[RMDB]
RNA sequence: GGGAACGACUCGAGUAGAGUCGAAAAACGUGUUCGCACGUGAUACCUCCUAAGUCUAGCGAAGAACUUACGUUGUUAAACGUGUCGGAAACGACACCAAAACAACACUUAACACCGUAAGGGAGCUAGAUAUGGAUAGCAUGCUCUUCGGAGCAAAAUUCAACCAGAAGUUCGCUUCUGGUUGAAUAAAAGAAACAACAACAACAAC
Reactivity to DMS in 0.01 (KOAc 150mM, MgCl2 10mM, bicine 150mM(pH8.5), 24C), signal-to-noise 2, nucleotides 027 to 156: a030c010g090u000g000u000u000c200g050c050a080c020g000u020g020a150u000a100c050c010u020c010c010u000a060a300g010u000c000u010a040g030c020g030a160a140g020a230a170c040u000u000a040c010g010u000u000g030u000u010a000a050a050c040g000u010g060u010c000g000g060a200a160a280c000g020a020c020a050c040c080a050a060a140a180c090a090a160c160a060c210u000u000a030a020c010a010c020c000g020u010a010a000g000g000g010a300g000c000u000a000g030a000u000a150u000g000g010a100u000a100g000c030a110u010g010c000u000c000u000u000c160g030g010a020g010c010a010a030a020
Reactivity to 2A3 in 0.01 (KOAc 150mM, MgCl2 10mM, bicine 150mM(pH8.5), 24C), signal-to-noise 5, nucleotides 027 to 156: a010c020g010u040g040u080u110c300g010c070a000c010g010u020g010a020u160a150c010c000u040c000c010u060a120a050g020u000c000u000a000g010c040g200a300a020g020a090a010c000u000u000a000c000g000u000u020g010u010u050a030a110a080c060g000u010g000u000c020g040g040a080a040a050c010g000a000c000a020c020c040a010a120a030a060c100a060a010c020a010c050u010u000a000a000c000a000c000c010g000u000a010a000g000g000g000a010g000c000u010a010g010a000u020a010u010g000g000a010u050a080g120c110a100u150g000c020u010c000u070u130c270g100g000a010g030c060a020a000a000

This 207-nucleotide RNA was probed chemically with DMS and 2A3. 2A3 adducts were read by reverse transcription with SuperScript II with manganese. The RNA was probed in 150 mM KOAc, 10 mM MgCl2 and 150 mM bicine (pH 8.5) at 24 C.